The data come from the RNA Mapping Database (RMDB), library RFMREP. Structure probing data (DMS and 2A3) for a 177-nucleotide construct. The DMS profile rests on 12,708 reads. Conditions: 150 mM KOAc, 10 mM MgCl2 and 150 mM bicine (pH 8.5), 24 C.
RNA sequence: GGGAACGACUCGAGUAGAGUCGAAAAUCUCAGUCCCUGAGACCCUAACUUGUGAUGUUUACCGUUUAAAUCCACGGGUUAGGCUCUUGGGAGCUGCGCUGCGUCCCGAUCCUUCGGGAUCGGGACGGCUAUUAGAUGGAUUCGUCCAUCUAAUAGCAAAAGAAACAACAACAACAAC
Reactivity to DMS in 0.01 (KOAc 150mM, MgCl2 10mM, bicine 150mM(pH8.5), 24C), signal-to-noise 6, nucleotides 027 to 126: u010c020u000c000a030g010u000c010c000c000u000g010a000g000a020c250c000c000u000a000a010c000u000u010g010u000g000a120u010g010u000u000u000a060c300c290g000u010u010u010a020a040a040u000c260c010a010c000g000g000g000u000u000a010g010g010c140u000c000u000u000g000g000g000a030g000c010u000g000c180g020c150u000g010c010g010u000c000c000c000g000a010u000c000c000u000u010c200g030g010g010a000u000c010g000g000g000a010c000g010
Reactivity to 2A3 in 0.01 (KOAc 150mM, MgCl2 10mM, bicine 150mM(pH8.5), 24C), signal-to-noise 6, nucleotides 027 to 126: u030c010u000c010a010g040u060c010c000c000u000g000a010g000a010c010c000c000u000a000a000c000u020u000g020u000g020a110u100g090u150u120u100a140c120c060g140u140u140u210a080a090a020u060c040c010a000c000g020g000g000u000u000a000g000g000c000u020c000u000u010g010g000g010a020g020c000u030g000c100g020c070u140g010c020g000u010c000c010c020g010a000u010c020c010u040u100c250g100g000g000a010u010c010g000g000g010a000c010g000